[RMDB]
RNA sequence: GGGAACGACUCGAGUAGAGUCGAAAACUCCCCGUUCCUGGAGAAGGGAGACUCGGGAACGCCUAGCAUCUGAGGGACGAAGCCGCCCCCGGGCGCUCCCCUCGGAGGUCCACUGGGUGGGUUCACAAGCGCCUAAUCUUCGGAUUAGGCAAAAGAAACAACAACAACAAC
Reactivity to 2A3 in 0.01 (KOAc 150mM, MgCl2 10mM, bicine 150mM(pH8.5), 24C), signal-to-noise 9, nucleotides 027 to 129: c030u030c000c000c000c000g010u010u010c010c000u050g110g040a070g020a080a080g040g040g010a050g020a010c020u010c040g020g010g010a030a020c010g030c000c010u070a060g010c020a100u040c020u040g020a030g010g020g010a020c060g060a050a010g030c060c010g040c010c010c000c020c030g030g010g000c020g020c000u010c000c000c000c000u010c010g000g000a010g000g010u050c040c020a060c070u040g010g000g020u040g020g020g000u040u030c050a070c020a110a050g060c040
Reactivity to DMS in 0.01 (KOAc 150mM, MgCl2 10mM, bicine 150mM(pH8.5), 24C), signal-to-noise 8, nucleotides 027 to 129: c190u030c000c000c000c000g030u000u030c000c010u000g000g010a050g000a090a080g040g040g000a060g020a050c050u020c080g020g020g000a050a050c080g020c050c040u040a020g010c120a050u040c000u000g000a020g000g000g000a080c080g030a060a170g030c080c060g000c000c020c020c060c090g060g030g040c030g030c010u000c040c010c000c000u000c020g000g000a050g010g000u040c070c080a150c080u050g010g000g020u000g000g040g020u030u020c050a100c110a120a080g030c190